RNA sequence: GGGAACGACUCGAGUAGAGUCGAAAAGCCAUUCACUGGCCUUGAAUGUCCACAUUCACCUCCUUGAAAUCGAUGCCCCGUAUCGGAGGCUCCAUGUGGAUUUGGGGGCAGAGGCCUGUACUCCAGAUGGUGGGGUGGCCUUCACCAAUCAGGCAGAAAUAGGCUAUCUGUUCGCAGAUAGCCUAUUAAAAGAAACAACAACAACAAC
Reactivity to 2A3 in 0.01 (KOAc 150mM, MgCl2 10mM, bicine 150mM(pH8.5), 24C), signal-to-noise 2, nucleotides 027 to 156: g020c000c000a020u060u060c060a030c070u070g080g000c000c020u040u090g060a200a050u140g030u070c010c000a000c000a010u090u070c080a040c010c000u030c030c000u050u150g150a100a120a090u190c060g050a080u180g030c000c000c010c040g030u040a030u060c040g020g000a000g000g000c000u050c050c010a000u000g020u010g010g040a010u120u020u060g020g010g000g000g020c020a020g010a010g060g010c000c000u030g100u100a030c020u010c070c020a010g050a300u120g050g150u030g050g030g000g000u020g080g020c050c000u090u050c090a120c040c000a020a140u110c060a020g010g000c000a010g060a030
Reactivity to DMS in 0.01 (KOAc 150mM, MgCl2 10mM, bicine 150mM(pH8.5), 24C), signal-to-noise 1, nucleotides 027 to 156: g000c010c010a120u010u010c090a150c080u000g020g000c020c020u020u010g010a070a110u000g010u000c020c000a020c010a070u000u010c090a060c030c000u000c020c000u000u020g010a060a140a160u010c060g020a140u000g000c130c010c010c030g020u000a140u000c100g010g000a030g030g030c020u000c110c040a040u000g030u000g020g030a070u000u000u000g010g050g000g030g140c030a100g040a090g010g030c000c040u000g050u000a030c030u000c030c030a110g000a110u000g020g040u000g010g040g020g090u000g010g030c050c000u030u000c040a080c020c020a060a130u010c030a080g000g000c000a080g010a090
About this RNA: This 207-nucleotide RNA was probed chemically with 2A3 and DMS. For DMS, 2,899 sequencing reads were counted. Reactivities are rounded to 0.1 and cut off at 0 and 3.